[RMDB]
RNA sequence: GGGAACGACUCGAGUAGAGUCGAAAAGAGGACGGACUACUGGCUGUCUCCGGAGUAGGACGCAGAGGCUGUAUCCGGUCUGCAAACACGACAGGGCUGGAAUGUCACCUGGAGUGGUCCGAAGAGAGGGAUGCAUCUGCUUCGGCAGGUGCAUCCCAAAAGAAACAACAACAACAAC
Reactivity to 2A3 in 0.01 (KOAc 150mM, MgCl2 10mM, bicine 150mM(pH8.5), 24C), signal-to-noise 2, nucleotides 027 to 126: g120a010g040g050a000c020g000g000a020c000u060a030c040u110g050g080c030u030g060u090c040u000c030c010g060g020a100g100u200a080g050g000a020c000g040c030a030g020a010g110g020c010u020g010u060a020u030c000c010g040g010u000c010u010g000c080a030a050a050c010a000c030g070a010c000a010g000g130g000c000u100g050g170a100a100u160g050u100c050a060c080c000u010g030g000a020g000u000g000g030u000c010c000g080a150a000g120a000g010a020
Reactivity to DMS in 0.01 (KOAc 150mM, MgCl2 10mM, bicine 150mM(pH8.5), 24C), signal-to-noise 3, nucleotides 027 to 126: g000a170g000g000a100c020g030g000a030c060u000a060c020u010g000g000c000u010g000u030c300u000c020c020g000g010a160g050u040a090g020g000a020c100g000c040a060g000a100g000g000c020u010g010u020a100u000c010c010g040g000u010c000u000g000c100a080a050a020c070a070c060g000a130c010a050g000g010g000c040u000g030g040a050a150u040g000u030c030a130c010c000u010g000g000a070g000u000g000g000u010c000c000g010a170a110g000a160g000a150
Chemical mapping of a 177-nucleotide RNA with 2A3 and DMS.
For 2A3 the reverse transcriptase was SuperScript II with manganese.
The RNA was probed in 150 mM KOAc, 10 mM MgCl2 and 150 mM bicine (pH 8.5) at 24 C.
Reactivities are given for positions 27 through 126.